[RMDB]
RNA sequence: GGGAACGACUCGAGUAGAGUCGAAAAACGAACGUGUUCGUACGAGUACUCGAACGAGAGUACGAACACACGUACACUCGAUCGAGAGUACGUUCGAACUCGAUCGUGUACGUACACUCACGAACUCUCGAACGUUCACGAACUCGAACUCACACGACACUUGACAUCAGUUCGCUGAUGUCAAGUGAAAAGAAACAACAACAACAAC
Reactivity to 2A3 in 0.01 (KOAc 150mM, MgCl2 10mM, bicine 150mM(pH8.5), 24C), signal-to-noise 7, nucleotides 027 to 156: a010c100g020a050a020c020g010u010g000u000u000c020g000u020a030c020g010a040g080u090a130c020u020c040g050a110a060c090g000a010g010a030g020u040a010c010g030a150a010c080a010c020a000c020g000u000a000c010a000c010u100c100g020a030u010c010g000a010g000a030g070u100a090c070g030u050u050c030g000a020a020c020u010c020g020a020u000c010g000u000g000u030a010c020g010u020a030c030a020c090u110c010a070c050g090a090a030c030u020c000u000c060g010a040a010c020g020u030u020c080a090c140g040a060a020c020u010c060g030a040a010c010u050c120a040c030a020c070g140a030
Reactivity to DMS in 0.01 (KOAc 150mM, MgCl2 10mM, bicine 150mM(pH8.5), 24C), signal-to-noise 1, nucleotides 027 to 156: a070c020g020a150a130c040g020u010g040u010u000c120g000u000a080c010g010a170g050u000a060c050u010c010g000a050a210c050g000a090g000a130g000u000a020c000g010a030a210c120a060c110a070c000g000u010a040c000a090c020u000c030g020a060u020c060g000a110g000a210g030u000a100c130g040u000u000c020g000a060a170c020u000c010g010a030u010c020g070u000g060u050a020c080g020u010a080c240a070c000u010c040a130c030g000a070a100c050u000c010u000c000g010a040a160c020g010u010u000c090a150c070g000a100a070c020u000c050g010a110a110c030u000c070a060c040a130c050g020a250
The record gives the reactivity of an RNA of 207 nucleotides to 2A3 and DMS. The reactions ran in a buffer of 150 mM KOAc, 10 mM MgCl2 and 150 mM bicine (pH 8.5), at 24 C. Reactivities are given for positions 27 through 156. The data come from the RNA Mapping Database (RMDB), library OK3TST. For 2A3, 7,122 sequencing reads were counted.